[RMDB]
RNA sequence: GGGAACGACUCGAGUAGAGUCGAAAACGCAAACGGAAGAGCAACCAACCGCUGCGCACCCGUCAGGAACCGGCAGAAACCUAAAGACGGUUGACGUGCACGUCAAUCAUGCACGGCGUGCUAUAUAGCCUACUAGGGGAUUCGUCCCCUAGUAGGCAAAAGAAACAACAACAACAAC
Reactivity to DMS in 0.01 (KOAc 150mM, MgCl2 10mM, bicine 150mM(pH8.5), 24C), signal-to-noise 2, nucleotides 027 to 126: c110g030c050a060a050a090c050g000g000a040a240g000a160g010c060a060a080c090c060a030a150c050c020g000c060u000g000c040g020c110a130c030c000c010g020u000c110a040g020g020a070a040c040c010g000g020c070a070g000a050a150a090c050c040u030a060a060a110g000a050c120g010g010u000u020g010a090c030g030u000g010c020a020c000g020u010c080a090a100u000c060a070u020g020c080a050c070g000g000c050g010u000g010c000u010a060u040a060u010a070
Reactivity to 2A3 in 0.01 (KOAc 150mM, MgCl2 10mM, bicine 150mM(pH8.5), 24C), signal-to-noise 1, nucleotides 027 to 126: c030g040c010a000a070a020c040g020g010a050a010g040a070g080c040a060a030c000c020a010a010c000c000g000c050u050g000c020g000c040a040c000c000c000g110u040c000a020g100g070a050a030c030c030g000g000c050a030g070a080a070a050c010c010u060a130a100a030g080a010c000g020g000u020u040g000a030c010g060u020g000c010a000c020g010u020c040a000a240u100c080a110u200g020c030a000c020g010g000c010g000u000g000c010u000a020u000a030u090a160

Structure probing data (DMS and 2A3) for a 177-nucleotide construct. Reactivities are rounded to 0.1 and cut off at 0 and 3. Source: RMDB library OK2TST, as collected in RNAgym.